[RMDB]
RNA sequence: GGGAACGACUCGAGUAGAGUCGAAAAAAUUGGACUUAUGUCUUUAUUGAUCAUUCAAGUGAGCAAAGGAAAUACGCUUUAAAAACUCAGGCAAACGGUGUUUGUCUUGUAUCCCGUCAGAGGAAACAUACAGCAAAGCAUUCGUGCUUUGCUGUAUAAAAGAAACAACAACAACAAC
Reactivity to DMS in 0.01 (KOAc 150mM, MgCl2 10mM, bicine 150mM(pH8.5), 24C), signal-to-noise 3, nucleotides 027 to 126: a040a070u010u010g000g000a060c030u000u010a070u000g000u010c000u010u010u000a080u010u020g000a060u010c070a080u010u020c170a060a110g000u000g000a060g000c030a050a010a060g010g010a060a080a040u000a050c110g000c090u000u020u050a020a050a020a060a090c110u000c050a040g000g000c020a010a010a010c020g030g020u070g010u010u010u000g000u000c000u000u010g020u020a100u000c000c000c000g000u010c150a060g010a070g020g020a070a070a100c170
Reactivity to 2A3 in 0.01 (KOAc 150mM, MgCl2 10mM, bicine 150mM(pH8.5), 24C), signal-to-noise 4, nucleotides 027 to 126: a000a020u140u090g030g020a030c030u130u100a040u260g040u040c000u020u140u020a160u070u060g080a080u070c070a010u110u190c030a120a080g080u050g120a010g020c010a030a060a120g060g040a050a090a110u190a040c050g000c040u060u050u100a010a100a040a040a030c100u070c060a010g000g000c000a020a040a030c140g220g020u220g020u120u000u000g000u010c010u000u080g060u020a130u030c010c020c000g040u090c080a040g070a070g050g110a000a090a020c040
This 177-nucleotide RNA was probed chemically with DMS and 2A3. For DMS the reverse transcriptase was MarathonRT. Conditions: 150 mM KOAc, 10 mM MgCl2 and 150 mM bicine (pH 8.5), 24 C.